This 177-nucleotide RNA was probed chemically with DMS.
[RMDB]
RNA sequence: GGGAACGACUCGAGUAGAGUCGAAAAGAUAUGGAGUAAGGGAGCUCGAAGUGGCGAUGAAACCAUCGAACUCGGAAACGAGUUCGAUGGUGGAGCCAUGUAGAGCGACGAUCUUACUCCUAAGUCAUCUAUAGAGUACCUUCGGGUACUCUAUAGAAAAAGAAACAACAACAACAAC
Reactivity to DMS in 0.01 (KOAc 150mM, MgCl2 10mM, bicine 150mM(pH8.5), 24C), signal-to-noise 3, nucleotides 027 to 126: g010a050u010a300u000g010g010a020g020u020a020a010g000g000g000a080g000c010u000c000g000a120a300g020u000g000g020c010g000a070u010g020a230a210a050c000c010a010u000c000g030a010a010c000u010c000g000g000a100a110a240c010g020a040g020u000u000c000g010a000u000g000g000u000g000g000a060g000c020c010a010u000g000u000a300g010a010g010c020g000a040c300g000a010u010c010u000u000a010c000u000c010c000u000a000a080g000u000c050a140

The data come from the RNA Mapping Database (RMDB), library TTRINS. The reactions ran in a buffer of 150 mM KOAc, 10 mM MgCl2 and 150 mM bicine (pH 8.5), at 24 C. DMS adducts were read by reverse transcription with MarathonRT.